RNA sequence: GGGAACGACUCGAGUAGAGUCGAAAACUAGUCGCACGUACAUAGCGCUGGCCUGCGCAUGCUGUCUAGGAUCCGGCCGCGCAUGCGACAGAGGUACGUAUGGCCGGCCCUGUACUGACGAUCCGACUCAGUGGGACAACUUCGGUUGUCCCACUGAAAAAGAAACAACAACAACAAC
Reactivity to 2A3 in 0.01 (KOAc 150mM, MgCl2 10mM, bicine 150mM(pH8.5), 24C), signal-to-noise 1, nucleotides 027 to 126: c010u000a040g000u000c000g030c020a030c090g020u000a000c010a090u110a040g040c030g010c080u000g000g000c000c000u000g000c030g000c000a010u070g050c000u030g030u010c020u140a110g140g000a090u030c040c040g060g000c060c010g000c070g010c020a020u090g090c030g050a020c020a040g050a010g050g090u130a040c040g000u030a050u200g000g000c000c000g010g000c020c000c010u040g000u050a030c050u070g070a120c020g020a050u020c030c010g020a030c020
Reactivity to DMS in 0.01 (KOAc 150mM, MgCl2 10mM, bicine 150mM(pH8.5), 24C), signal-to-noise 2, nucleotides 027 to 126: c070u000a080g000u000c020g020c100a080c240g000u010a010c010a080u000a070g040c100g000c040u000g010g000c060c010u000g000c010g020c050a090u020g010c040u000g000u000c050u000a140g040g010a140u010c050c050g010g010c010c060g010c060g000c100a070u010g020c060g020a030c020a030g000a080g050g010u000a070c040g020u000a040u010g040g030c020c000g010g000c050c040c130u030g000u000a030c070u010g020a270c040g020a080u000c090c020g000a190c100
Description:
Conditions: 150 mM KOAc, 10 mM MgCl2 and 150 mM bicine (pH 8.5), 24 C. Chemical mapping of a 177-nucleotide RNA with 2A3 and DMS. Reactivities are given for positions 27 through 126. For DMS, 1,484 sequencing reads were counted.